[RMDB]
RNA sequence: GGGAACGACUCGAGUAGAGUCGAAAAUUUAUUCAUGUGCGAAAACAGUUGGUGAUUAUUGAUAAGAAGAGGGAGGGCAGAUGGUGUGGUAGUCCAAGGCACAGGCUCCAGCAGAUUAUCUAGGUUUAAAUCUUGGCUGUAGGCCAGGCCCUGUGGAGUACGGUAUUUAUUUCGAUAAAUACCGUACAAAAGAAACAACAACAACAAC
Reactivity to DMS in 0.01 (KOAc 150mM, MgCl2 10mM, bicine 150mM(pH8.5), 24C), signal-to-noise 2, nucleotides 027 to 156: u010u010u000a110u020u000c040a140u010g010u010g020c010g000a100a140a050a100c020a070g000u000u000g040g020u000g030a100u010u010a080u000u000g010a120u000a040a090g020a090a070g020a080g020g000g000a090g030g030g010c050a060g020a120u010g020g040u010g040u010g010g010u000a050g010u000c050c020a040a100g020g030c010a070c070a140g010g030c030u000c120c010a030g050c040a070g010a100u000u000a090u000c080u000a090g000g050u010u000u000a070a040a060u000c040u000u010g050g000c040u010g040u010a040g020g020c000c020a050g010g000c100c030c020u010g020u010g020g010a250
Reactivity to 2A3 in 0.01 (KOAc 150mM, MgCl2 10mM, bicine 150mM(pH8.5), 24C), signal-to-noise 2, nucleotides 027 to 156: u120u100u090a150u130u070c060a050u190g030u050g050c040g040a050a030a100a040c070a010g030u070u050g060g000u040g090a050u030u190a050u130u040g100a080u040a190a050g030a060a000g010a050g020g020g020a020g030g020g000c040a030g010a080u000g030g020u020g000u010g050g030u010a040g010u020c030c020a040a030g010g000c020a010c040a160g020g000c040u000c030c000a000g010c010a000g000a080u020u050a020u110c080u140a070g060g170u090u120u160a090a100a060u020c000u070u100g160g010c000u030g060u060a040g020g080c000c010a020g000g000c000c040c000u060g040u040g020g000a010